Overview:
This 177-nucleotide RNA was probed chemically with 2A3 and DMS. The DMS profile rests on 2,551 reads.
RNA sequence: GGGAACGACUCGAGUAGAGUCGAAAAGGCACGCGAUCACUCGGGCGGGUGAACAUCACCGGCUCAGCUGGAUUCUCGAACCCCCGACACCUCUACGCUCAGCGCACACAACCCCGAAAAAGACUUCGUUGAAUUAUAGGUUCGCCUAUAAUUCAACAAAAGAAACAACAACAACAAC
Reactivity to 2A3 in 0.01 (KOAc 150mM, MgCl2 10mM, bicine 150mM(pH8.5), 24C), signal-to-noise 2, nucleotides 027 to 126: g020g020c020a000c070g070c020g030a030u020c000a040c120u060c080g010g030g000c050g030g030g000u030g020a090a060c040a190u100c020a010c000c000g130g000c020u020c040a010g000c030u050g000g030a060u100u010c040u030c060g100a140a130c000c000c020c000c000g010a000c010a020c010c010u030c020u050a030c030g000c000u010c040a010g020c010g000c050a000c000a010c000a050a090c010c000c000c040g020a080a020a010a010a000g060a020c050u070u040c140
Reactivity to DMS in 0.01 (KOAc 150mM, MgCl2 10mM, bicine 150mM(pH8.5), 24C), signal-to-noise 4, nucleotides 027 to 126: g010g010c030a050c050g000c100g020a080u020c040a060c050u010c120g020g000g000c050g010g040g020u010g010a120a150c250a140u010c040a050c010c020g010g000c010u000c040a040g010c110u000g010g010a120u000u010c020u000c030g000a060a180c040c010c000c030c010g010a110c090a040c040c030u000c050u000a040c080g010c020u000c030a070g000c050g010c030a020c070a050c070a060a120c070c010c000c040g010a030a050a050a070a100g010a140c110u010u000c300